RNA sequence: GGGAACGACUCGAGUAGAGUCGAAAAGUCAGCGUAUCCAAAACGGCAACCUCAUCACCAACAUUGCCGAAGUCACCAAGGGCCAUCUUGGCUCCACCAACACUCUCUAUGCUCUGCCUGCACCCCCAUGGACGCGUGAGUUCGCUCACGCGUCCAUAAAAGAAACAACAACAACAAC
Reactivity to 2A3 in 0.01 (KOAc 150mM, MgCl2 10mM, bicine 150mM(pH8.5), 24C), signal-to-noise 2, nucleotides 027 to 126: g050u010c020a000g010c000g010u010a060u010c010c020a000a000a030a210c030g000g100c030a020a040c000c010u150c060a100u050c010a070c050c000a060a090c030a100u060u060g020c000c030g030a030a040g000u020c040a060c020c000a110a040g010g010g000c050c000a030u050c050u100u100g000g000c000u000c020c000a030c000c000a000a090c030a050c050u070c030u000c000u010a010u150g040c000u020c000u030g020c020c000u010g020c010a080c000c000c000c000c000